[RMDB]
RNA sequence: GGGAACGACUCGAGUAGAGUCGAAAAACGAGGUACGCCUCGAAAAUAUGACCGGUGUCAUAGCCUCUAGCACACAGAGGUCGCGUGGGUUCAACUCCCCCCCUUUUCCGAGGGUAUCGGAAACCGAAAAACACAAUUUGGUUCGCCAAAUUGUGAAGCAAAGAGAUAACUUCGGUUAUCUCUUUGCAAAAGAAACAACAACAACAAC
Reactivity to 2A3 in 0.01 (KOAc 150mM, MgCl2 10mM, bicine 150mM(pH8.5), 24C), signal-to-noise 4, nucleotides 027 to 156: a000c000g000a010g010g000u050a030c170g070c030c010u010c010g030a090a040a000a050u120a080u080g010a010c020c050g120g040u140g050u150c030a050u020a040g010c010c000u010c010u040a070g070c100a050c010a010c010a170g030a020g030g000u030c010g020c010g040u100g050g010g000u090u150c030a030a070c050u060c020c010c010c000c010c000c010u040u050u000u000c000c000g000a010g010g010g020u070a020u000c000g000g000a010a000a000c030c030g060a090a040a000a050a000c000a000c000a000a000u000u010u010g010g010u020u020c130g020c090c000a000a000a000u010u010g000u010g010a020a000
Reactivity to DMS in 0.01 (KOAc 150mM, MgCl2 10mM, bicine 150mM(pH8.5), 24C), signal-to-noise 2, nucleotides 027 to 156: a160c050g020a070g000g010u000a070c190g020c020c020u000c030g000a040a050a090a110u010a110u020g000a000c030c100g030g020u000g030u010c040a070u000a060g010c020c000u030c050u020a110g060c120a130c100a130c120a180g000a030g030g010u000c050g010c100g000u010g020g020g010u020u010c080a050a300c090u000c000c000c010c000c020c020c010u000u000u000u000c030c000g030a050g000g020g030u010a120u000c010g000g000a000a020a060c100c030g020a010a020a100a210a120c000a020c000a000a020u000u000u000g000g010u010u000c300g040c030c010a000a010a010u000u000g010u000g020a000a130

The record gives the reactivity of an RNA of 207 nucleotides to 2A3 and DMS.
2A3 adducts were read by reverse transcription with SuperScript II with manganese.
The data come from the RNA Mapping Database (RMDB), library M2RFPK.